[RMDB]
RNA sequence: GGGAACGACUCGAGUAGAGUCGAAAAGAAGUCCGACACGCUGUCGCGGGGCGAUUUAGCACCUUUCCCGGGAAAGGCCCCGGCGCGAUUUAGGCACAUUUAUUAGAUCAGUGCCGAUCUAAAGAAAAUAUGAUAAUACCUUCGGGUAUUAUCAUAUAAAAGAAACAACAACAACAAC
Reactivity to 2A3 in 0.01 (KOAc 150mM, MgCl2 10mM, bicine 150mM(pH8.5), 24C), signal-to-noise 3, nucleotides 027 to 126: g060a080a010g080u000c020c010g030a030c010a000c040g090c030u130g020u190c020g000c010g220g010g000g010c030g010a010u100u060u290a070g030c020a060c010c000u030u030u050c030c020c020g030g030g000a070a040a010g120g000c000c010c010c000g010g000c010g000c020g020a030u050u060u200a030g000g100c010a020c010a040u250u290u140a210u070u130a060g060a070u050c050a020g050u020g180c060c070g010a000u000c010u050a090a100a030g090a050a090a020
Reactivity to DMS in 0.01 (KOAc 150mM, MgCl2 10mM, bicine 150mM(pH8.5), 24C), signal-to-noise 6, nucleotides 027 to 126: g010a070a090g010u010c030c020g020a150c300a070c060g010c060u000g030u010c040g000c020g020g010g000g010c010g000a110u000u010u000a150g030c110a220c000c010u000u000u000c010c020c020g010g020g010a050a070a150g010g000c010c000c010c010g020g010c040g010c030g000a050u000u000u010a130g010g000c040a100c160a100u010u000u010a130u020u000a040g000a040u000c050a120g020u000g010c120c060g000a020u000c020u000a020a040a170g000a090a080a110
Chemical mapping of a 177-nucleotide RNA with 2A3 and DMS. The RNA was probed in 150 mM KOAc, 10 mM MgCl2 and 150 mM bicine (pH 8.5) at 24 C. For DMS the reverse transcriptase was MarathonRT. Source: RMDB library OK2TRN, as collected in RNAgym.